[RMDB]
RNA sequence: GGGAACGACUCGAGUAGAGUCGAAAAUUCCUCCCGGAUAACCUCCACCGACUCUGUGGAACCGCGUUCGGCAACAUACCGUCAACGUGUCAUUGGCUUGUGUGUCAUUGAGAUCCCCGGCCAGGCGCUACUCUGAGAACUUCGGUUCUCAGAGUAGAAAAGAAACAACAACAACAAC
Reactivity to DMS in 0.01 (KOAc 150mM, MgCl2 10mM, bicine 150mM(pH8.5), 24C), signal-to-noise 3, nucleotides 027 to 126: u020u000c000c010u010c050c010c000g020g030a080u020a110a130c090c000u000c020c020a100c060c060g000a140c050u030c030u000g000u030g000g020a090a150c130c050g000c070g010u000u000c050g030g010c060a090a050c150a110u000a070c090c080g020u000c050a010a030c110g020u040g000u000c050a070u000u010g000g030c020u000u030g000u000g010u010g000u010c040a070u000u000g000a070g010a090u010c020c020c010c090g020g000c010c000a040g000g010c090g000
Reactivity to 2A3 in 0.01 (KOAc 150mM, MgCl2 10mM, bicine 150mM(pH8.5), 24C), signal-to-noise 7, nucleotides 027 to 126: u050u010c010c000u040c010c010c010g020g000a070u050a090a060c010c020u030c020c020a020c020c020g100a070c030u020c030u100g050u060g070g030a050a040c030c020g000c010g030u030u030c030g030g030c020a050a050c010a150u150a070c020c010g040u040c040a020a040c040g040u050g060u100c060a080u020u090g030g010c010u060u060g030u020g020u020g030u160c040a080u030u130g050a050g010a090u040c010c000c000c000g010g000c000c010a020g020g000c040g000